[RMDB]
RNA sequence: GGGAACGACUCGAGUAGAGUCGAAAACGCAACACCAUACGGGAGGUGGAGGCUCGAUUCGACGCCACCGCGGAACCCGUGUGCAAGCUUCCUUGUUUGGAGACCAGACGGUACGGCCCGGAGUGUGUGGUGUAGUAGCCUUCGGGCUACUACACCAAAAAGAAACAACAACAACAAC
Reactivity to 2A3 in 0.01 (KOAc 150mM, MgCl2 10mM, bicine 150mM(pH8.5), 24C), signal-to-noise 3, nucleotides 027 to 126: c060g000c020a050a010c000a000c020c000a030u040a050c040g010g000g000a070g150g000u040g020g000a090g100g000c010u010c030g300a300u300u160c100g000a000c080g000c000c000a080c040c010g020c030g000g070a040a130c000c000c000g000u000g000u000g030c020a000a040g030c030u060u030c000c000u030u110g150u190u080u050g080g000a110g000a080c100c000a000g010a070c030g000g000u150a020c040g080g000c000c050c000g030g000a080g000u060g010u010g010
Reactivity to DMS in 0.01 (KOAc 150mM, MgCl2 10mM, bicine 150mM(pH8.5), 24C), signal-to-noise 1, nucleotides 027 to 126: c100g020c060a070a070c120a140c300c010a040u020a030c080g000g000g030a030g000g030u000g000g000a080g000g020c000u020c030g020a230u000u000c100g000a000c030g050c000c000a020c030c000g070c050g000g020a240a120c090c000c000g000u000g000u000g000c060a020a080g000c020u020u000c000c020u000u030g030u000u120u000g000g050a160g060a130c000c040a010g000a040c050g000g020u020a020c000g010g000c080c000c010g000g000a120g020u030g000u010g010
This 177-nucleotide RNA was probed chemically with 2A3 and DMS.
The 2A3 profile rests on 1,037 reads.